An RNA of 177 nucleotides, treated with 2A3 and DMS and read out base by base. Conditions: 150 mM KOAc, 10 mM MgCl2 and 150 mM bicine (pH 8.5), 24 C. For 2A3 the reverse transcriptase was SuperScript II with manganese. Source: RMDB library TTRDES, as collected in RNAgym.

RNA sequence: GGGAACGACUCGAGUAGAGUCGAAAAAAAAAAGAUAUGGAUCCACUUUCGCUUUGAUCUAUGCUAAUACUAUAUCGGAAACGAUAUAGGAUAUCAUAGGGAGCGAAAGGGAUCCUAAGUCAAAAAAGUUAGAUAAUAAGUUCGCUUAUUAUCUAACAAAAGAAACAACAACAACAAC
Reactivity to 2A3 in 0.01 (KOAc 150mM, MgCl2 10mM, bicine 150mM(pH8.5), 24C), signal-to-noise 1, nucleotides 027 to 126: a040a000a030a000a010a100g020a000u030a000u040g010g010a000u040c000c030a300c300u000u000u010c030g000c050u300u250u010g000a010u030c000u010a010u010g000c020u020a040a020u060a280c000u000a000u000a000u000c000g010g000a010a000a000c000g000a000u010a000u010a000g000g000a010u010a000u080c000a000u010a000g010g000g000a020g010c000g000a000a000a000g000g000g000a000u000c000c000u000a000a000g000u000c000a000a060a000a120a060a190
Reactivity to DMS in 0.01 (KOAc 150mM, MgCl2 10mM, bicine 150mM(pH8.5), 24C), signal-to-noise 1, nucleotides 027 to 126: a000a020a080a050a060a060g010a030u000a090u030g000g000a040u000c000c000a170c010u010u000u000c000g000c000u000u010u010g010a050u010c000u000a000u000g020c300u000a130a080u010a060c000u010a000u000a000u010c000g000g000a000a010a020c000g000a010u000a020u000a010g000g000a030u000a110u000c000a000u000a000g000g000g000a000g020c000g000a010a000a010g010g000g010a020u000c000c000u000a000a030g000u000c000a010a120a050a090a100a110